About this RNA
The record gives the reactivity of an RNA of 177 nucleotides to DMS. For DMS the reverse transcriptase was MarathonRT. Conditions: 150 mM KOAc, 10 mM MgCl2 and 150 mM bicine (pH 8.5), 24 C.
RNA sequence: GGGAACGACUCGAGUAGAGUCGAAAAGCAGCCGCUCGCCGAUCACGUUGCGCUGGAUCUGCGAGCUGCCGGCAUAGAUCGUCGCGGCCCGUGCGUAGAGCAGCUCAUCCAUCCAGCAGGCCGGGGAACUCACAUGACCUUUCGAGGUCAUGUGAGUAAAAGAAACAACAACAACAAC
Reactivity to DMS in 0.01 (KOAc 150mM, MgCl2 10mM, bicine 150mM(pH8.5), 24C), signal-to-noise 1, nucleotides 027 to 126: g050c090a110g010c040c080g000c020u000c060g000c000c000g020a060u000c050a070c080g040u000u000g040c130g010c030u000g000g000a010u000c030u000g010c130g030a010g000c000u000g000c030c030g000g020c020a060u010a080g010a060u000c060g010u010c060g010c030g010g010c050c020c030g000u000g010c060g020u020a080g020a130g000c030a030g000c010u000c030a080u000c080c080a130u000c030c050a060g000c040a160g000g010c010c030g000g020g000g000a090